Structure probing data (DMS and 2A3) for a 177-nucleotide construct. Reactivities are rounded to 0.1 and cut off at 0 and 3. 2A3 adducts were read by reverse transcription with SuperScript II with manganese. Conditions: 150 mM KOAc, 10 mM MgCl2 and 150 mM bicine (pH 8.5), 24 C. For 2A3, 1,278 sequencing reads were counted. It was measured as part of the RMDB library M2PK90. DMS adducts were read by reverse transcription with MarathonRT. For DMS, 1,172 sequencing reads were counted.
RNA sequence: GGGAACGACUCGAGUAGAGUCGAAAAUUAUUGAGCGUAGAUGUCUCUGUCACGAUACGAGUAAGUGACUCUCGUCUACUACUGGCGAAUGAGACAGAGACAUUAUAUGCUCGUGCCAGUCAAUAAACGACGAGUGACUAUUCGUAGUCACUCGUCGAAAAGAAACAACAACAACAAC
Reactivity to DMS in 0.01 (KOAc 150mM, MgCl2 10mM, bicine 150mM(pH8.5), 24C), signal-to-noise 2, nucleotides 027 to 126: u010u000a130u010u000g000a020g010c000g050u000a030g020a000u000g000u000c020u000c020u000g020u030c000a200c050g020a110u000a110c010g010a100g000u000a030a080g010u000g000a020c020u000c240u020c170g000u020c010u000a040c000u010a010c030u000g000g010c070g000a140a050u000g000a110g010a020c010a000g020a010g000a020c000a000u000u000a050u000a030u000g020c000u000c010g030u000g010c030c020a140g010u010c120a110a050u000a040a140a170
Reactivity to 2A3 in 0.01 (KOAc 150mM, MgCl2 10mM, bicine 150mM(pH8.5), 24C), signal-to-noise 2, nucleotides 027 to 126: u200u080a070u050u190g000a000g010c000g000u020a000g040a030u010g000u010c010u020c000u000g020u000c010a000c060g040a000u110a190c020g000a050g020u030a050a270g000u020g060a030c000u000c020u040c130g020u000c010u060a060c030u000a010c010u040g160g100c060g070a100a040u160g020a080g000a060c000a000g000a010g000a000c000a000u010u000a000u000a000u000g040c000u000c020g000u010g050c010c000a110g100u140c040a030a230u080a220a250a030